[RMDB]
RNA sequence: GGGAACGACUCGAGUAGAGUCGAAAAUCACAAAGCGGAUUUAGCUCGGUUGGGAGAGGUCCAGACCGAAGAUCUGGUUGUCCUGUGUACGAUACACAGAAUUCGCACCAUAAACAACGGGAGAUUCAAUGGGCGAUUUAUUCGUAAAUCGCCCAUUAAAAGAAACAACAACAACAAC
Reactivity to 2A3 in 0.01 (KOAc 150mM, MgCl2 10mM, bicine 150mM(pH8.5), 24C), signal-to-noise 2, nucleotides 027 to 126: u070c070a070c110a150a190a050g120c070g000g010a000u000u010u180a110g000c030u000c040g150g000u000u030g020g110g020a170g000a030g080g160u050c000c000a030g030a000c000c030g080a050a040g000a050u000c010u020g000g000u060u220g050u010c000c000u030g000u030g000u130a080c090g010a060u040a150c070a010c000a020g000a010a010u030u020c040g010c000a000c000c000a000u100a160a300a000c050a010a000c050g090g010g000a100g030a080u030u010c000
Reactivity to DMS in 0.01 (KOAc 150mM, MgCl2 10mM, bicine 150mM(pH8.5), 24C), signal-to-noise 2, nucleotides 027 to 126: u040c120a090c160a040a090a160g050c010g000g000a030u000u020u020a100g000c100u000c000g030g000u000u030g030g010g000a070g020a120g020g000u000c000c010a110g000a030c010c090g000a100a020g000a090u020c060u000g010g000u000u000g000u000c030c020u010g000u020g000u000a030c180g000a110u020a060c060a040c050a040g000a040a050u000u010c060g000c050a080c040c030a080u020a070a110a060c100a020a080c110g010g000g020a080g040a060u010u020c080

Source information:
This 177-nucleotide RNA was probed chemically with 2A3 and DMS. High DMS reactivity at an A or C suggests that its Watson-Crick edge is free. Conditions: 150 mM KOAc, 10 mM MgCl2 and 150 mM bicine (pH 8.5), 24 C. Source: RMDB library OK1LIB, as collected in RNAgym. High 2A3 reactivity points to a flexible backbone, as in loops and unpaired stretches. For DMS the reverse transcriptase was MarathonRT.